[RMDB]
Annotation
Chemical mapping of a 177-nucleotide RNA with 2A3 and DMS. Values cover nucleotides 27 to 126. The reactions ran in a buffer of 150 mM KOAc, 10 mM MgCl2 and 150 mM bicine (pH 8.5), at 24 C. Source: RMDB library RFMREP, as collected in RNAgym. 2A3 adducts were read by reverse transcription with SuperScript II with manganese. The 2A3 profile rests on 4,426 reads.
RNA sequence: GGGAACGACUCGAGUAGAGUCGAAAAUUUCUGGCACGUUGUGUCUUCACGCAGACAGAAGCUACCCAGGUAAUUCUGUUCCCGUAACGCUCAACGUCCAGAGCAGGUAAGCCAGGAGGCCGCCCUGGACUACUUCAUUGUUCGCAAUGAAGUAGUCAAAAGAAACAACAACAACAAC
Reactivity to 2A3 in 0.01 (KOAc 150mM, MgCl2 10mM, bicine 150mM(pH8.5), 24C), signal-to-noise 2, nucleotides 027 to 126: u030u030u000c020u000g010g000c130a010c020g010u000u000g000u030g040u020c000u070u070c070a020c010g020c050a010g010a040c010a000g010a020a020g030c050u040a020c010c000c070a050g160g010u020a030a070u000u000c000u040g030u080u050c030c010c000g000u010a010a020c040g000c010u020c010a010a010c000g020u000c000c010a000g000a000g000c010a000g000g030u020a050a000g020c010c040a110g200g120a160g110g060c010c000g010c010c000c010u020g040
Reactivity to DMS in 0.01 (KOAc 150mM, MgCl2 10mM, bicine 150mM(pH8.5), 24C), signal-to-noise 3, nucleotides 027 to 126: u010u000u010c000u000g010g010c140a020c020g010u000u000g030u000g000u020c100u010u000c290a050c040g030c210a150g000a030c020a000g000a050a020g030c190u000a040c070c030c140a190g020g010u000a030a070u000u000c010u000g000u010u000c030c300c010g010u000a030a070c300g000c010u000c040a020a030c020g000u000c000c000a000g000a030g020c090a020g010g010u030a140a080g010c010c000a080g020g010a170g010g000c020c090g000c080c010c010u000g000